[RMDB]
RNA sequence: GGGAACGACUCGAGUAGAGUCGAAAAGGCAACAAGUUUGUGGUGGACGUGGACUCAAACGGGAAGUACGUUUGGUUCGAAUUUGUGCUACCGGGCCAGCCAAUGAAUCAGGGAGAAAUAUGGAAGUGGCGCAAAGAGGUAAACCCGGAUGAGCUGCGUUGUACGGAAUAUUCGUAUUCCGUACAACAAAAGAAACAACAACAACAAC
Reactivity to DMS in 0.01 (KOAc 150mM, MgCl2 10mM, bicine 150mM(pH8.5), 24C), signal-to-noise 2, nucleotides 027 to 156: g030g020c030a050a070c050a090a110g010u010u010u000g050u000g020g010u000g010g000a070c050g020u010g000g020a060c040u000c030a020a040a130c020g020g010g010a100a100g010u010a050c030g010u020u000u000g010g000u000u000c050g010a040a150u000u000u000g020u010g000c000u000a100c030c010g000g020g030c020c030a170g030c040c010a030a110u000g020a110a070u000c070a060g000g000g010a080g030a070a050a140u000a080u010g000g000a150a070g020u000g010g000c010g000c060a030a060a070g000a060g010g030u000a050a100a100c000c010c020g000g010a110u000g010a130g020c070u000g020c150
Reactivity to 2A3 in 0.01 (KOAc 150mM, MgCl2 10mM, bicine 150mM(pH8.5), 24C), signal-to-noise 5, nucleotides 027 to 156: g060g030c030a050a020c030a120a090g010u040u050u070g070u090g040g030u030g030g020a020c040g050u080g020g010a050c020u030c190a030a040a010c020g000g010g020a050a030g080u160a050c030g010u020u030u050g030g020u020u040c020g040a050a070u080u060u100g040u050g010c000u030a030c030c020g020g030g000c020c010a000g020c010c020a020a080u130g050a040a070u150c070a050g030g050g020a070g080a070a090a020u220a070u080g030g020a030a050g030u020g040g000c000g000c060a020a040a010g040a030g000g020u080a050a060a020c000c000c000g000g020a040u050g020a020g000c020u030g010c030
This 207-nucleotide RNA was probed chemically with DMS and 2A3. It was measured as part of the RMDB library OK3TST. The RNA was probed in 150 mM KOAc, 10 mM MgCl2 and 150 mM bicine (pH 8.5) at 24 C. 2A3 adducts were read by reverse transcription with SuperScript II with manganese.